[RMDB]
RNA sequence: GGGAACGACUCGAGUAGAGUCGAAAACAAGAAGUUUCCUGGCAAUAAACUAAGCACAGCAUUAUUUUUUAAGGAACACAAAUUAAGUGUUCAACCUGUGGCAAAUUUGUACUUUCUCCCUGAAUUACUAGGUACACGACUUCGGUCGUGUACCUAGAAAAGAAACAACAACAACAAC
Reactivity to 2A3 in 0.01 (KOAc 150mM, MgCl2 10mM, bicine 150mM(pH8.5), 24C), signal-to-noise 1, nucleotides 027 to 126: c040a010a010g140a120a000g030u080u220u060c020c020u000g060g000c040a000a080u080a110a110a040c070u030a040a000g050c020a110c000a000g110c090a110u100u060a180u010u110u050u000u040u050a130a000g090g020a010a000c000a000c000a000a250a000u070u060a250a000g000u000g000u000u000c050a100a090c000c020u000g000u050g080g040c040a030a030a030u160u100u040g040u060a000c030u120u200u000c060u110c000c000c000u050g050a030a010u000u000a080